[RMDB]
RNA sequence: GGGAACGACUCGAGUAGAGUCGAAAAAGGACAUGGAAGUGACACAAAGCAUUAAGUAGUGAUGAAUACUUUCUUAAUCCGUCUUUAUGAGUAAACCUGAAGCAUCAUUACCAAAACUGACACUUUAACAGGCUCUCCAGGACUACCUUUGAGGCUGAGUUGGUAAACGGUUCGCCGUUUACCAACUAAAAGAAACAACAACAACAAC
Reactivity to 2A3 in 0.01 (KOAc 150mM, MgCl2 10mM, bicine 150mM(pH8.5), 24C), signal-to-noise 2, nucleotides 027 to 156: a020g090g010a070c050a070u050g080g000a040a000g080u050g030a000c040a010c010a100a130a010g090c050a090u140u080a140a100g010u050a000g000u010g050a060u030g000a150a000u030a220c010u040u110u020c000u030u020a050a050u090c040c040g110u000c060u040u170u020a180u160g040a010g040u050a020a040a040c010c040u100g060a040a000g000c010a030u080c020a010u010u060a050c060c000a010a020a030a050c060u080g000a000c010a020c030u070u000u160a130a030c020a010g060g010c020u010c000u010c080c000a040g030g020a030c030u000a150c030c000u010u010u060g020a000g000g040c030u020g030